[RMDB]
RNA sequence: GGGAACGACUCGAGUAGAGUCGAAAACUGUUCAUUUUCUUCCCUGGUCUAACUCAAUAAUUGCCAUCAUGAAAAUUCUGGGUGACUUUUUGUGACUAAAGUCCCAUUGUAAGCCACAUUCUUUGUCCGUCAAUGGGACAUUCGUGUCCCAUUGACGAAAAGAAACAACAACAACAAC
Reactivity to 2A3 in 0.01 (KOAc 150mM, MgCl2 10mM, bicine 150mM(pH8.5), 24C), signal-to-noise 1, nucleotides 027 to 126: c100u090g040u140u070c020a020u030u060u000u130c010u030u060c000c020c000u020g110g000u000c060u060a050a030c000u060c070a100a040u190a200a050u110u010g060c060c000a060u120c040a040u090g030a010a030a060a100u070u080c140u150g040g000g000u100g050a060c070u000u050u030u060u060g030u010g000a000c030u070a010a010a010g010u010c000c000c000a040u040u090g050u060a030a030g020c000c000a060c000a080u020u020c000u020u020u010g110u000c020